[RMDB]
RNA sequence: GGGAACGACUCGAGUAGAGUCGAAAAGAAACGCAAGGCCGCUGACCGACGGGAUAUUGUGGGGCUAACCACAGGGGACGCGGCGUUAUCACUUGCCUUUUAAGCCGACCGUCUGGGCUGCAUACAAACCACCCAACUAUCUUCGGAUAGUUGGGAACAUGUAAUUACUGUUCGCAGUAAUUACAUGAAAAGAAACAACAACAACAAC
Reactivity to DMS in 0.01 (KOAc 150mM, MgCl2 10mM, bicine 150mM(pH8.5), 24C), signal-to-noise 3, nucleotides 027 to 156: g000a080a050a060c060g010c050a050a070g020g020c000c020g010c020u000g010a230c020c020g010a180c040g040g000g020a130u000a110u000u000g030u000g020g030g000g000c150u000a070a150c010c020a050c030a090g010g020g030g010a290c180g020c040g000g010c040g030u010u000a070u000c100a230c010u010u000g010c000c040u000u000u000u000a060a110g030c010c010g020a080c040c020g000u010c040u000g000g040g020c030u010g000c040a130u000a150c080a080a070a100c020c040a130c010c000c000a000a010c000u010a000u000c000u000u000c300g060g000a010u000a010g010u000u000g000g000g000a010a010
Reactivity to 2A3 in 0.01 (KOAc 150mM, MgCl2 10mM, bicine 150mM(pH8.5), 24C), signal-to-noise 5, nucleotides 027 to 156: g010a010a050a000c080g000c020a010a020g160g000c000c030g000c030u050g060a040c010c010g030a020c020g070g050g000a100u100a120u220u090g020u010g010g020g050g080c100u090a070a080c000c000a000c020a020g010g000g000g050a000c040g000c030g030g040c010g020u040u040a030u050c010a010c090u010u020g000c000c010u020u140u030u090a070a010g020c020c010g060a080c010c000g040u020c020u060g040g010g000c010u010g000c020a040u120a110c080a030a080a070c030c050a040c000c010c000a000a000c000u000a000u000c000u020u030c070g060g000a000u000a000g000u000u000g000g000g000a000a000

The data come from the RNA Mapping Database (RMDB), library M2RFPK. This 207-nucleotide RNA was probed chemically with DMS and 2A3. The RNA was probed in 150 mM KOAc, 10 mM MgCl2 and 150 mM bicine (pH 8.5) at 24 C. 2A3 adducts were read by reverse transcription with SuperScript II with manganese. In probing experiments dimethyl sulfate is read out at A N1 and C N3, which are open when not base-paired. The 2A3 profile rests on 5,209 reads. For DMS, 7,351 sequencing reads were counted.